Description: This 177-nucleotide RNA was probed chemically with 2A3 and DMS. The 2A3 profile rests on 1,153 reads. For 2A3 the reverse transcriptase was SuperScript II with manganese. The reactions ran in a buffer of 150 mM KOAc, 10 mM MgCl2 and 150 mM bicine (pH 8.5), at 24 C.
RNA sequence: GGGAACGACUCGAGUAGAGUCGAAAACAUAUGACGGAGAGAGGAACACUCAGCGGAAACGCAUCCAAUGUCUGAAGUCUUUAAUGGGUAUAACAGUCAGUUGACCCAGAUCCCAACAGACAAUAAAGUGUCUUAUGCGUUUCGACGCAUAAGACACAAAAGAAACAACAACAACAAC
Reactivity to 2A3 in 0.01 (KOAc 150mM, MgCl2 10mM, bicine 150mM(pH8.5), 24C), signal-to-noise 2, nucleotides 027 to 126: c030a060u240a080u280g060a000c010g060g000a030g010a010g020a010g110g060a080a000c050a010c110u020c050a020g020c020g000g090a100a050a020c020g000c010a010u010c040c030a000a080u060g000u040c020u000g030a100a010g000u000c010u000u040u030a070a050u010g000g100g000u030a110u000a300a060c010a040g290u160c030a000g040u120u020g040a020c000c010c000a000g000a020u020c030c010c000a020a010c040a020g060a010c000a000a060u170a110a170a030
Reactivity to DMS in 0.01 (KOAc 150mM, MgCl2 10mM, bicine 150mM(pH8.5), 24C), signal-to-noise 2, nucleotides 027 to 126: c120a100u000a040u000g030a050c080g000g000a080g020a070g000a040g010g000a100a130c140a140c040u000c080a150g030c040g000g000a020a070a110c020g000c030a240u000c100c060a020a080u000g000u000c000u020g000a080a130g020u000c010u000u000u000a250a240u020g010g020g000u000a120u000a000a050c030a120g000u000c180a110g000u010u020g000a060c000c000c030a030g000a170u000c000c000c000a030a280c050a000g000a020c000a100a090u010a060a070a150